Chemical mapping of a 177-nucleotide RNA with DMS and 2A3. The RNA was probed in 150 mM KOAc, 10 mM MgCl2 and 150 mM bicine (pH 8.5) at 24 C. For DMS the reverse transcriptase was MarathonRT. Reactivities are rounded to 0.1 and cut off at 0 and 3.
[RMDB]
RNA sequence: GGGAACGACUCGAGUAGAGUCGAAAAGCUAGGCAUUUCGAUGCCUAGCGAGCGCAGAGUCUAUGCAUCUCUGAAUCACACAACAGCCGUGUCUUUGCGUGGGAGUAUCCCUCUUCGGAGGGAUAAAACGAACAGCAAAAUUCGUUUUGCUGUUCGUAAAAGAAACAACAACAACAAC
Reactivity to DMS in 0.01 (KOAc 150mM, MgCl2 10mM, bicine 150mM(pH8.5), 24C), signal-to-noise 5, nucleotides 027 to 126: g010c000u000a000g000g000c000a010u000u010u010c170g030a030u000g010c000c010u000a000g010c000g010a060g030c090g000c010a020g000a050g010u000c050u010a100u000g010c090a110u000c070u000c030u010g000a090a110u010c110a080c080a070c090a060a080c120a070g000c070c070g010u000g000u000c020u000u000u000g000c030g010u000g000g000g010a140g010u000a010u000c000c000c000u000c000u000u010c180g030g000a020g010g000g000a000u000a010a030a070
Reactivity to 2A3 in 0.01 (KOAc 150mM, MgCl2 10mM, bicine 150mM(pH8.5), 24C), signal-to-noise 4, nucleotides 027 to 126: g010c000u000a000g000g000c010a010u060u040u130c180g120a000u020g000c000c000u000a000g020c010g000a020g010c030g010c010a010g000a010g030u010c040u100a100u140g010c030a120u020c070u000c010u090g090a130a140u140c050a050c010a020c000a130a160c010a060g050c030c020g070u040g020u010c020u000u020u050g020c020g010u050g050g050g000a090g030u020a010u000c000c000c020u000c000u020u040c200g120g010a000g010g000g010a000u010a000a000a000